Structure probing data (DMS and 2A3) for a 177-nucleotide construct. 2A3 adducts were read by reverse transcription with SuperScript II with manganese. It was measured as part of the RMDB library M2PK50. Values cover nucleotides 27 to 126.
RNA sequence: GGGAACGACUCGAGUAGAGUCGAAAAAUCGGCCCGUUCGCGGGCCGAUACACGCGGAGGCUCGCACCUAGCGACCGGCGCAAGGACGCACGGUACUGCGAAUUGACUGUGGAUUCGUCCACAGUAAAGAAUUCUUAUUGUUCGCAAUAAGAAUUCUAAAAGAAACAACAACAACAAC
Reactivity to DMS in 0.01 (KOAc 150mM, MgCl2 10mM, bicine 150mM(pH8.5), 24C), signal-to-noise 5, nucleotides 027 to 126: a030u000c010g020g020c000c000c010g030u000u000c180g020c020g030g000g020c000c000g010a010u000a010c110a080c110g020c030g000g010a130g010g010c080u000c050g010c050a140c070c060u010a110g010c020g000a080c030c030g000g010c010g000c050a170a100g020g000a130c030g010c020a080c030g010g010u000a050c070u000g020c030g010a090a120u010u000g010a030c000u000g010u000g000g000a030u000u020c190g000u000c000c000a010c000a010g000u000a020a090
Reactivity to 2A3 in 0.01 (KOAc 150mM, MgCl2 10mM, bicine 150mM(pH8.5), 24C), signal-to-noise 4, nucleotides 027 to 126: a000u010c010g000g000c050c040c030g020u030u030c230g000c030g090g000g020c010c000g000a000u020a000c020a020c030g100c030g030g110a050g050g070c040u050c050g000c010a050c010c040u040a040g040c010g060a010c010c000g040g000c020g000c040a130a220g180g000a120c020g000c050a170c080g060g020u070a130c040u110g000c000g060a050a080u110u170g080a020c000u000g000u010g000g010a010u030u050c120g050u010c040c000a000c000a000g000u010a020a030